The record gives the reactivity of an RNA of 177 nucleotides to DMS.
RNA sequence: GGGAACGACUCGAGUAGAGUCGAAAAGGUCGUGGCUUCGGCCACGACCAAAUAAAUUCAGCGGUAAGGUCCGCAAAAAUAUUACCGCUGAUGCGGAGCUUAAAAUCCCCGGGUUCGCCCGGGGAAACAAGGUAUUAGUCUUCGGACUAAUACCUUGAAAAGAAACAACAACAACAAC
Reactivity to DMS in 0.01 (KOAc 150mM, MgCl2 10mM, bicine 150mM(pH8.5), 24C), signal-to-noise 1, nucleotides 027 to 126: g000g000u020c030g110u000g000g000c010u010u020c290g060g010c020c000a000c000g020a020c000c000a020a010a070u000a030a110a110u010u000c010a030g000c000g000g000u000a000a020g010g030u000c110c210g010c210a000a030a110a090a120u000a070u020u000a000c000c000g000c000u010g000a010u010g040c220g000g000a120g000c080u010u010a030a120a060a150u010c000c000c020c000g020g010g000u010u020c220g030c030c000c000g000g000g000g000a000a000a090
Values cover nucleotides 27 to 126. High DMS reactivity at an A or C suggests that its Watson-Crick edge is free. It was measured as part of the RMDB library M2PK50.